[RMDB]
RNA sequence: GGGAACGACUCGAGUAGAGUCGAAAAAUGGUAGUUAGUCUACUCGCUAUCCUAGUUACUUUGGAGUAAUCUAAAGUGUGUGUAAACGGGCGAAAGUCUGUAAAAUACUGGGGACAUAGCGUCAACAAGAACUAGUAGACCUUCGGGUCUACUAGAAGUGUUUAUGACUGUUCGCAGUCAUAAACACAAAAGAAACAACAACAACAAC
Reactivity to 2A3 in 0.01 (KOAc 150mM, MgCl2 10mM, bicine 150mM(pH8.5), 24C), signal-to-noise 4, nucleotides 027 to 156: a000u030g020g010u010a030g010u140u090a070g080u060c000u000a000c010u000c010g010c000u000a020u050c000c000u010a030g000u040u040a010c000u020u000u020g010g000a020g040u130a120a170u000c000u000a000a010a000g000u020g010u030g000u010g040u070a130a140a050c010g000g000g010c010g040a050a020a010g000u000c010u020g040u050a070a050a000a010u090a030c010u010g000g000g000g020a020c040a080u010a000g000c000g030u060c010a020a050c020a060a060g080a050a030c000u000a000g000u000a000g000a000c000c000u030u060c230g080g000g000u010c000u000a000c000u000a000g000a010a000
Reactivity to DMS in 0.01 (KOAc 150mM, MgCl2 10mM, bicine 150mM(pH8.5), 24C), signal-to-noise 2, nucleotides 027 to 156: a090u010g000g000u000a000g010u000u000a150g040u000c000u000a020c000u020c030g040c020u000a040u000c010c000u000a060g030u000u000a010c030u000u000u000g000g000a020g000u030a160a220u000c020u010a020a010a010g000u000g000u000g050u010g030u010a060a150a060c000g000g020g030c000g020a170a120a220g080u000c010u000g030u000a010a060a050a050u000a020c020u000g030g000g000g000a080c300a140u000a020g000c000g000u000c080a080a110c120a100a110g000a150a200c000u000a010g000u000a010g000a030c000c000u000u000c300g090g020g040u010c000u000a000c000u000a000g020a010a060
The data come from the RNA Mapping Database (RMDB), library M2RFPK. This 207-nucleotide RNA was probed chemically with 2A3 and DMS. For 2A3 the reverse transcriptase was SuperScript II with manganese. The 2A3 profile rests on 3,687 reads. The DMS profile rests on 3,240 reads. The reactions ran in a buffer of 150 mM KOAc, 10 mM MgCl2 and 150 mM bicine (pH 8.5), at 24 C. Reactivities are given for positions 27 through 156.